Description: The record gives the reactivity of an RNA of 207 nucleotides to DMS and 2A3. It was measured as part of the RMDB library M2RFPK. For 2A3 the reverse transcriptase was SuperScript II with manganese. For 2A3, 654 sequencing reads were counted. For DMS, 2,388 sequencing reads were counted.
RNA sequence: GGGAACGACUCGAGUAGAGUCGAAAAAGAAUUGUACCACCACUGCGUAUCCUAAACGGGCUCUGCAGUGGUUAUUCUUGUAAAGUGCUAGGAGUGAAUAGUGGCCCGUAUUGCAGGCAUUAACAUUAAAAGGCAAUCCACUUCGGUGGAUUGCCAAGUUCUUUUCUACGUUCGCGUAGAAAAGAACAAAAGAAACAACAACAACAAC
Reactivity to DMS in 0.01 (KOAc 150mM, MgCl2 10mM, bicine 150mM(pH8.5), 24C), signal-to-noise 1, nucleotides 027 to 156: a030g020a050a100u000u000g010u000a080c100c120a080c010c020a030c020u000g000c000g020u000a000u000c010c010u020a050a130a110c140g000g020g000c030u000c090u000g010c050a040g030u010g020g010u000u010a010u000u010c030u000u020g000u020a060a060a100g020u020g000c000u000a110g020g010a110g020u000g020a080a180u020a080g030u000g030g020c020c020c030g080u000a120u010u000g010c080a060g000g000c030a070u000u020a040a070c100a130u000u010a050a070a090a120g040g000c010a000a000u000c010c000a030c010u020u000c300g100g000u000g020g020a030u000u000g000c030c000a000a010
Reactivity to 2A3 in 0.01 (KOAc 150mM, MgCl2 10mM, bicine 150mM(pH8.5), 24C), signal-to-noise 2, nucleotides 027 to 156: a000g130a040a030u180u110g040u210a070c040c040a010c000c000a000c000u000g000c020g030u050a050u130c020c040u130a170a200a040c060g010g090g000c080u130c160u270g000c010a010g000u000g010g010u000u000a000u000u000c000u000u030g060u070a120a120a020g060u010g050c010u050a080g040g080a050g020u050g070a190a010u050a130g050u050g100g030c030c030c020g030u050a070u030u150g000c070a030g010g050c010a040u030u170a200a020c020a010u140u240a140a090a040a010g000g000c000a000a000u000c000c000a030c010u110u110c250g000g000u000g000g000a010u010u000g000c010c000a000a010